[RMDB]
Notes:
Conditions: 150 mM KOAc, 10 mM MgCl2 and 150 mM bicine (pH 8.5), 24 C. The record gives the reactivity of an RNA of 207 nucleotides to 2A3 and DMS.
RNA sequence: GGGAACGACUCGAGUAGAGUCGAAAAAAAUUGUAGAAGAUAAGAGCAGCAGGAAAAAAUGCAAUGCUGAAAAUUGCAAUGAUGUCGCUUAUUACAAUAUUAAGGGACAACCUCCUAACUAUUGUAAUAAGCAUAAGGCUGAAAAUAUGGUCGACUCAUUCGAUAGAAUGUUCGCAUUCUAUCGAAUAAAAGAAACAACAACAACAAC
Reactivity to 2A3 in 0.01 (KOAc 150mM, MgCl2 10mM, bicine 150mM(pH8.5), 24C), signal-to-noise 2, nucleotides 027 to 156: a010a010a020u140u050g010u030a080g030a220a010g020a130u130a160a060g020a020g090c010a000g040c010a010g040g020a140a180a040a050a000a000u060g000c020a070a030u030g040c100u120g110a060a010a070a050u040u060g020c010a000a020u060g030a030u070g050u080c040g020c020u000u010a000u000u000a000c000a010a010u000a000u030u140a120a090g030g020g000a000c020a050a070c010c030u020c000c000u000a030a020c060u000a000u000u000g000u010a020a000u000a040a000g000c040a010u030a000a010g000g000c010u010g060a040a060a050a080u110a110u120g050g040u030c030g040a060c000u030c070
Reactivity to DMS in 0.01 (KOAc 150mM, MgCl2 10mM, bicine 150mM(pH8.5), 24C), signal-to-noise 2, nucleotides 027 to 156: a070a030a040u030u000g010u000a150g000a130a130g010a180u000a150a110g010a190g010c050a040g040c050a070g060g000a010a010a050a060a070a050u000g040c010a070a010u010g010c080u000g000a060a100a040a040u000u000g010c030a060a060u010g010a120u000g000u000c100g060c000u000u000a010u000u000a000c000a010a010u000a040u000u000a050a110g000g000g000a170c110a070a150c250c170u010c000c010u000a010a160c300u000a020u000u000g010u000a010a010u000a000a020g010c100a020u000a010a060g010g020c000u000g000a070a060a060a080u010a050u000g000g010u010c040g010a100c030u000c080